[RMDB]
RNA sequence: GGGAACGACUCGAGUAGAGUCGAAAAGCUGGCUAACAUCGCGCGGUGCUACGCGUGCAGUUAGCUGUGUACGUAAUGUUAGUGCACCGUGGUCGGCUAACUGACAUCAUGGCCGACGCGCGUGUUGUAGUACAUACGCGCUAACACGCGCUGGUCGCUUCCGAUUAACCUUCGGGUUAAUCGGAAGAAAAGAAACAACAACAACAAC
Reactivity to 2A3 in 0.01 (KOAc 150mM, MgCl2 10mM, bicine 150mM(pH8.5), 24C), signal-to-noise 3, nucleotides 027 to 156: g060c080u050g010g000c010u010a090a020c030a250u070c070g020c020g000c000g000g000u140g070c060u130a070c010g000c000g040u010g040c050a040g000u060u050a010g010c040u010g000u000g000u040a130c140g000u040a140a100u110g040u150u120a050g020u010g060c060a020c040c020g040u130g050g130u080c010g010g000c000u030a080a000c010u060g070a020c010a090u210c030a110u170g000g000c000c010g040a100c080g000c000g000c010g000u000g000u020u040g060u050a050g020u030a040c060a100u180a100c160g030c020g010c120u040a040a000c010a000c000g010c000g000c050u040g050g010u040c020g010
The record gives the reactivity of an RNA of 207 nucleotides to 2A3. Source: RMDB library OK3TST, as collected in RNAgym. The RNA was probed in 150 mM KOAc, 10 mM MgCl2 and 150 mM bicine (pH 8.5) at 24 C.